Annotation
Chemical mapping of a 177-nucleotide RNA with 2A3 and DMS.
RNA sequence: GGGAACGACUCGAGUAGAGUCGAAAAAGCUGCCGGCCAUACGUGGCCGGCAGCAGGAUGCAAGGUAGUAUUACCUUGCAUCCUAUGUAGCAAGUAGCAAGAUCACGGAUAUACGUAUCCGUGAUCAUGUCUAUCUUUUAUUCGUAAAAGAUAGACAAAAAGAAACAACAACAACAAC
Reactivity to 2A3 in 0.01 (KOAc 150mM, MgCl2 10mM, bicine 150mM(pH8.5), 24C), signal-to-noise 1, nucleotides 027 to 126: a000g000c020u020g000c050c040g030g140c000c000a060u070a050c180g110u080g010g020c100c000g030g030c000a010g000c000a020g020g000a010u000g000c010a020a000g040g000u020a040g030u070a200u290u090a020c000c000u000u000g010c010a000u010c000c020u020a000u020g060u010a020g030c050a080a120g100u100a010g130c140a120a040g030a000u000c000a000c040g020g010a000u000a020u010a040c210g030u050a010u020c000c000g010u010g000a010u010c010a010
Reactivity to DMS in 0.01 (KOAc 150mM, MgCl2 10mM, bicine 150mM(pH8.5), 24C), signal-to-noise 2, nucleotides 027 to 126: a110g020c000u000g060c000c000g060g030c000c010a120u010a060c170g010u000g070g060c000c020g030g090c020a010g020c010a000g000g000a000u000g000c010a000a010g000g010u000a020g000u000a140u000u000a020c000c000u010u010g000c010a010u000c000c000u000a020u010g010u000a120g020c080a130a120g000u010a080g000c130a130a140g010a000u000c000a000c000g000g000a010u000a030u010a070c180g030u000a010u000c000c000g020u000g000a000u000c000a030
The data come from the RNA Mapping Database (RMDB), library RFMREP. 2A3 is a SHAPE reagent: it acylates the 2'-hydroxyl of flexible nucleotides of all four kinds. The 2A3 profile rests on 1,146 reads. For DMS the reverse transcriptase was MarathonRT. The reactions ran in a buffer of 150 mM KOAc, 10 mM MgCl2 and 150 mM bicine (pH 8.5), at 24 C.